[RMDB]
The record gives the reactivity of an RNA of 177 nucleotides to DMS and 2A3. Conditions: 150 mM KOAc, 10 mM MgCl2 and 150 mM bicine (pH 8.5), 24 C.
RNA sequence: GGGAACGACUCGAGUAGAGUCGAAAAGAUAUGGAGAAAGCUUUGAUCUGUGACAUCGGAAACGAUGUACAGGGAGCUUCUCCUAAGUCAAAAUCAGUGCUGUCACGUUCGCGUGACAGCACUGAAACUAUCUAACAUCGUUCGCGAUGUUAGAUAGAAAAGAAACAACAACAACAAC
Reactivity to DMS in 0.01 (KOAc 150mM, MgCl2 10mM, bicine 150mM(pH8.5), 24C), signal-to-noise 4, nucleotides 027 to 126: g010a030u000a300u010g010g000a010g000a040a020a040g020c000u000u000u020g000a040u010c000u010g010u010g020a020c010a000u000c010g000g010a140a090a190c020g000a010u000g010u000a010c010a000g020g000g000a010g010c000u000u000c000u000c000c000u010a010a060g020u000c030a080a090a110a130u000c000a000g010u000g010c010u000g000u000c000a000c000g020u000u000c270g010c000g020u000g000a010c000a010g000c010a000c010u000g000a010a030a180
Reactivity to 2A3 in 0.01 (KOAc 150mM, MgCl2 10mM, bicine 150mM(pH8.5), 24C), signal-to-noise 5, nucleotides 027 to 126: g020a020u080a040u150g010g020a020g020a080a210a030g010c030u300u300u080g080a100u100c000u010g050u110g230a050c000a010u000c010g000g030a080a030a050c010g000a000u000g000u010a000c000a000g020g010g000a000g000c000u010u000c010u000c000c000u020a140a020g040u020c040a010a020a010a300u040c000a000g010u000g000c000u000g000u010c000a010c030g050u110u110c300g010c000g120u000g000a000c000a000g010c020a000c000u000g000a010a010a000